Description: This 207-nucleotide RNA was probed chemically with DMS and 2A3.

RNA sequence: GGGAACGACUCGAGUAGAGUCGAAAAUCAGUCAGCUACUUGGUAUUAGCCUGCGGCAGUGGGGCUGCCAUCAUUUCUACAGAGAAGUAAACUCUAGGCAGCCAAGAGCCCCCACUCAUCAGGAUCAUGGAGUAAAGGACAUGCAUUGAGAGGCAUCGUAACCACAUCAUUUCGAUGAUGUGGUUACAAAAGAAACAACAACAACAAC
Reactivity to DMS in 0.01 (KOAc 150mM, MgCl2 10mM, bicine 150mM(pH8.5), 24C), signal-to-noise 2, nucleotides 027 to 156: u020c070a170g000u000c040a140g000c010u000a040c020u000u000g000g040u030a090u000u000a090g000c010c030u010g000c030g000g040c070a110g000u000g010g000g020g000c000u000g010c020c010a180u010c080a090u000u010u000c110u000a180c120a160g000a040g010a010a160g040u000a090a110a140c030u000c010u000a100g040g020c050a050g040c010c020a070a050g000a110g000c030c000c010c000c030a080c030u000c040a090u000c040a060g020g000a090u000c030a120u030g000g000a060g000u000a090a090a180g000g010a050c020a080u010g050c060a080u000u000g000a100g020a100g010g050c000a070u000c090
Reactivity to 2A3 in 0.01 (KOAc 150mM, MgCl2 10mM, bicine 150mM(pH8.5), 24C), signal-to-noise 3, nucleotides 027 to 156: u090c000a020g060u040c020a000g000c020u030a030c010u060u050g020g030u060a060u100u090a080g020c000c010u020g010c100g050g000c020a000g010u030g010g040g020g000c000u020g000c000c010a040u080c010a040u040u270u030c070u090a100c090a040g050a010g020a260a020g050u130a140a180a110c030u010c040u090a050g010g010c010a000g000c030c000a000a030g030a010g020c010c000c000c000c000a000c010u010c000a120u030c010a010g020g020a020u060c010a020u110g040g000a030g050u080a090a060a040g040g000a000c000a040u030g030c010a020u040u070g030a050g010a010g020g030c000a020u020c050
The RNA was probed in 150 mM KOAc, 10 mM MgCl2 and 150 mM bicine (pH 8.5) at 24 C. Values cover nucleotides 27 to 156. For 2A3, 2,033 sequencing reads were counted.